RNA sequence: GGGAACGACUCGAGUAGAGUCGAAAAACGGGGCUAGCGAGUGGAUGUUCCGCCCCAAGGGGAGCCGAGUGAGGCUUAUCCCGGGGAACUCGGUAAUUCGCCCCGAAAUGAGGACUCCGGGGUCCCCCAAUAGUGGGCUUCGGCCCACUAAAAAGAAACAACAACAACAAC
Reactivity to 2A3 in 0.01 (KOAc 150mM, MgCl2 10mM, bicine 150mM(pH8.5), 24C), signal-to-noise 3, nucleotides 027 to 129: a000c000g000g000g000g000c020u030a030g100c000g040a010g010u100g020g020a130u140g080u170u080c010c010g030c000c030c030c000a070a080g010g010g000g000a000g000c020c000g010a070g150u300g110a090g010g020c000u000u010a050u040c010c000c000g000g010g000g000a040a010c000u000c010g010g020u120a130a170u120u070c030g010c000c000c000c000g000a020a000a010u030g010a030g090g010a010c000u000c000c000g000g010g000g000u000c060c000c000c010c010a040a020
An RNA of 170 nucleotides, treated with 2A3 and read out base by base. It was measured as part of the RMDB library 15KLIB. For 2A3 the reverse transcriptase was SuperScript II with manganese.